[RMDB]
RNA sequence: GGGAACGACUCGAGUAGAGUCGAAAAGAUAUGGACUAGAAAUGUGGCAGGACGUUCUAUGAACUACAAGAUAAAUCGGAAACGAUUUACUUGCAUAGAACGUCCUGCCGAAUCUAGUCCUAAGUCAGAAUAGUGCAUCGUUCGCGAUGCACUAUUCAAAAGAAACAACAACAACAAC
Reactivity to DMS in 0.01 (KOAc 150mM, MgCl2 10mM, bicine 150mM(pH8.5), 24C), signal-to-noise 1, nucleotides 027 to 126: g020a020u000a300u000g000g010a010c000u000a000g000a040a030a090u010g040u010g000g030c010a000g000g000a010c000g010u000u000c000u000a000u000g000a120a040c140u010a300c000a000a020g010a140u000a000a010a000u000c010g000g000a100a100a190c000g000a030u000u000u000a020c000u000u000g000c000a010u000a020g010a000a000c000g000u000c000c020u000g010c010c000g000a030a050u000c000u000a000g020u000c000c000u000a020a060g000u000c050a190